[RMDB]
RNA sequence: GGGAACGACUCGAGUAGAGUCGAAAAUGAUCGUGAAGAGAACACUAGCUGAUCUACUUAUACCGAUAAAUAGGCAGAUAUCAGACAUUCAAAGCACUCUAAGCGAAGUAACAACAAGAGUCCAUGAAUUAGCAGGCAAGUUCGCUUGCCUGCUAAUAAAAGAAACAACAACAACAAC
Reactivity to 2A3 in 0.01 (KOAc 150mM, MgCl2 10mM, bicine 150mM(pH8.5), 24C), signal-to-noise 2, nucleotides 027 to 126: u220g080a110u040c000g000u080g040a040a030g000a000g080a300a000c120a000c030u050a000g010c000u000g000a000u000c000u060a080c000u050u140a000u000a020c000c190g090a060u080a140a300a060u120a020g000g020c000a000g020a050u100a040u070c000a000g160a060c000a020u010u000c020a150a050a040g100c040a050c050u150c000u000a030a030g000c000g050a060a050g100u060a180a000c100a000a000c000a070a020g000a010g230u000c000c000a070u090g010a120
Reactivity to DMS in 0.01 (KOAc 150mM, MgCl2 10mM, bicine 150mM(pH8.5), 24C), signal-to-noise 2, nucleotides 027 to 126: u030g000a060u000c010g000u000g000a130a000g000a040g000a070a240c100a210c010u050a070g000c010u000g000a000u000c000u000a040c030u000u000a000u030a070c080c250g000a190u000a010a050a010u000a050g000g050c010a000g000a010u000a050u000c000a050g000a200c090a150u000u000c180a180a050a110g000c300a080c000u000c000u000a030a190g000c000g020a000a020g040u020a250a070c130a120a210c230a110a120g000a210g000u000c010c040a010u000g000a190